[RMDB]
RNA sequence: GGGAACGACUCGAGUAGAGUCGAAAAACGAGAACUCACGUUCACGAUCACUCGAGAGUGUGUGAUCGUGAACACGAGUGUUCUCACGAUCUCACGUGAGAACGUGAACGUGAGAGUACUCUCGUACUCGUUCGAUCACACGUUCACGAUCGAACACGGGUACGCCAGAGUUCGCUCUGGCGUACCCAAAAGAAACAACAACAACAAC
Reactivity to 2A3 in 0.01 (KOAc 150mM, MgCl2 10mM, bicine 150mM(pH8.5), 24C), signal-to-noise 1, nucleotides 027 to 156: a000c000g000a030g000a110a020c010u050c030a080c130g000u010u000c000a000c010g020a020u000c000a010c040u030c020g230a160g030a000g140u250g010u000g000u000g280a010u010c020g000u020g000a000a000c020a000c030g000a000g000u010g040u020u020c000u000c000a000c000g040a100u000c000u050c020a000c000g000u000g020a100g040a060a010c000g000u000g000a090a020c000g000u010g040a020g000a000g030u060a170c000u020c050u080c110g000u010a100c040u010c120g090u200u140c030g000a050u020c040a040c000a000c160g110u130u080c040a020c110g000a000u010c000g000a040a030c020a040c030